Structure probing data (DMS and 2A3) for a 177-nucleotide construct.
The RNA was probed in 150 mM KOAc, 10 mM MgCl2 and 150 mM bicine (pH 8.5) at 24 C.
The 2A3 profile rests on 1,531 reads.
For DMS, 727 sequencing reads were counted.

[RMDB]
RNA sequence: GGGAACGACUCGAGUAGAGUCGAAAAAGCGAUCGCUAGCGUACCAUGAGUGCACAUCAUGUCUGAUCCGAUCACGCACAUGUCGCUAGUACGGAUCACGUGAUCCGCUAGAGUACCAUGGCUGUCACGCUCUCUCGGAAUUCGUUCCGAGAGAGCGAAAAGAAACAACAACAACAAC
Reactivity to DMS in 0.01 (KOAc 150mM, MgCl2 10mM, bicine 150mM(pH8.5), 24C), signal-to-noise 1, nucleotides 027 to 126: a050g020c090g000a040u010c140g010c030u000a080g040c080g050u000a080c110c020a110u000g000a060g000u000g060c240a120c130a180u000c040a030u000g000u010c030u040g120a050u020c100c010g000a100u010c100a060c100g000c030a020c190a080u000g040u030c150g030c040u000a030g000u000a060c080g030g010a000u040c010a120c180g100u010g000a020u000c060c000g000c000u000a060g000a140g000u000a050c100c030a150u000g010g000c060u010g010u030c080a090
Reactivity to 2A3 in 0.01 (KOAc 150mM, MgCl2 10mM, bicine 150mM(pH8.5), 24C), signal-to-noise 2, nucleotides 027 to 126: a020g160c130g020a060u110c130g010c040u010a010g030c020g010u050a010c060c000a150u230g100a010g090u070g000c050a050c000a100u090c000a020u040g120u020c080u040g000a030u000c040c030g050a080u050c030a010c070g000c020a030c060a190u160g080u170c160g030c090u010a010g010u060a040c020g010g000a000u000c000a000c130g140u120g000a020u010c040c020g000c000u000a010g010a010g130u000a000c000c030a020u050g020g000c110u060g070u090c010a030